[RMDB]
The record gives the reactivity of an RNA of 177 nucleotides to 2A3 and DMS. For DMS the reverse transcriptase was MarathonRT. The data come from the RNA Mapping Database (RMDB), libraries RFM100 and RFMREP. For 2A3 the reverse transcriptase was SuperScript II with manganese. The RNA was probed in 150 mM KOAc, 10 mM MgCl2 and 150 mM bicine (pH 8.5) at 24 C.
RNA sequence: GGGAACGACUCGAGUAGAGUCGAAAAGGCGAAACGACCCACGUAAGGUUCCCUAAUCGGAACUGAGCAUGGCGCGGUUUAGAAGUAAGUCCUGACUCGGUGUGACCAAAGUGGUCAUGGCGAACUCGAUAGAUACUCGGUUCGCCGAGUAUCUAUCAAAAGAAACAACAACAACAAC
Reactivity to 2A3 in 0.01 (KOAc 150mM, MgCl2 10mM, bicine 150mM(pH8.5), 24C), signal-to-noise 9, nucleotides 027 to 126: g050g010c030g030a030a020a020c040g180a250c010c000c000a010c020g020u020a040a020g010g010u000u010c020c000c010u040a050a080u170c030g000g000a000a010c000u020g010a010g030c020a020u040g020g000c100g000c040g080g040u070u080u120a120g020a190a020g040u110a060a020g070u020c000c010u020g030a060c020u020c010g160g300u010g010u000g010a010c010c020a090a210a190g250u250g050g000u000c000a010u010g020g040c000g010a050a050c030u020c070
Reactivity to DMS in 0.01 (KOAc 150mM, MgCl2 10mM, bicine 150mM(pH8.5), 24C), signal-to-noise 8, nucleotides 027 to 126: g010g010c030g010a050a040a050c050g000a180c080c010c010a030c060g030u010a060a300g010g010u000u000c000c000c020u000a110a090u030c300g010g010a020a000c010u010g000a300g010c020a050u000g010g010c210g020c040g000g000u020u000u000a070g010a090a090g000u010a080a100g020u010c010c000u010g000a070c080u000c020g010g010u000g010u000g000a020c010c010a090a140a130g030u030g010g010u000c000a010u010g010g010c000g000a030a090c130u020c080